[RMDB]
RNA sequence: GGGAACGACUCGAGUAGAGUCGAAAAAUCACCUGUAGCGGCACCAAUGAGCAGAUCACUUUCGGUUUGACGGGCUGCCGUCGUGCCGUCCCCGCGCUGAGCAUCCUGACCGACCAGCUCGCCCACGCGACCAUAAGAAAUUCGUUUCUUAUGGUCGAAAAGAAACAACAACAACAAC
Reactivity to 2A3 in 0.01 (KOAc 150mM, MgCl2 10mM, bicine 150mM(pH8.5), 24C), signal-to-noise 8, nucleotides 027 to 126: a000u060c040a050c030c020u050g080u130a030g030c020g020g010c030a020c020c040a090a160u140g020a060g050c020a010g020a090u090c030a040c150u110u210u180c100g160g020u070u120u200g070a050c030g010g030g030c060u090g050c010c000g040u020c020g000u030g010c000c010g050u070c000c000c000c000g030c000g000c030u060g020a030g010c010a030u030c000c020u040g040a060c010c020g030a040c010c010a010g020c010u030c030g030c010c010c020a040c030g090
Reactivity to DMS in 0.01 (KOAc 150mM, MgCl2 10mM, bicine 150mM(pH8.5), 24C), signal-to-noise 9, nucleotides 027 to 126: a090u010c090a110c020c020u000g010u010a100g010c030g010g010c030a040c030c080a060a090u010g000a140g010c030a040g010a120u010c070a100c140u000u000u000c110g020g000u000u010u010g010a060c130g000g000g010c120u000g000c000c020g030u000c130g010u010g010c010c020g010u000c030c010c010c030g010c110g020c040u000g010a090g010c050a070u000c030c020u000g000a100c080c030g000a070c060c040a090g000c040u000c070g000c010c010c020a080c220g010